[RMDB]
RNA sequence: GGGAACGACUCGAGUAGAGUCGAAAAGCAAACAACAAAAUCCCAUAGGAACCACGUAAUCUGCCAGGGCCGCCAUGACAAAGUACCGCAGGUGCAGUGCCUUGAACGACGGUGGGUGUCAGUGUGGCACUCACUCGGAAUUCGUUCCGAGUGAGUGAAAAGAAACAACAACAACAAC
Reactivity to 2A3 in 0.01 (KOAc 150mM, MgCl2 10mM, bicine 150mM(pH8.5), 24C), signal-to-noise 2, nucleotides 027 to 126: g080c060a020a010a140c040a030a000c050a070a200a000a080u040c000c020c030a010u070a020g070g020a040a040c020c010a010c030g000u060a080a110u020c020u060g050c040c040a050g010g070g020c010c010g010c040c040a050u060g040a050c040a060a060a000g030u010a060c010c020g040c060a030g130g100u180g010c020a000g030u010g050c000c000u010u010g040a160a030c020g050a010c050g030g060u040g000g000g070u030g020u010c010a070g040u020g030u060g140g000
Reactivity to DMS in 0.01 (KOAc 150mM, MgCl2 10mM, bicine 150mM(pH8.5), 24C), signal-to-noise 3, nucleotides 027 to 126: g020c090a080a090a110c130a060a060c080a070a120a120a130u000c010c000c000a160u010a180g020g010a050a090c010c020a020c020g020u010a100a140u020c050u000g000c110c040a130g010g000g050c030c050g000c010c010a190u000g020a120c050a080a030a080g000u010a030c030c030g000c060a130g010g020u040g020c040a080g040u020g000c030c030u020u000g000a050a130c070g000a100c100g000g020u000g000g020g000u020g010u010c020a050g040u010g030u020g000g000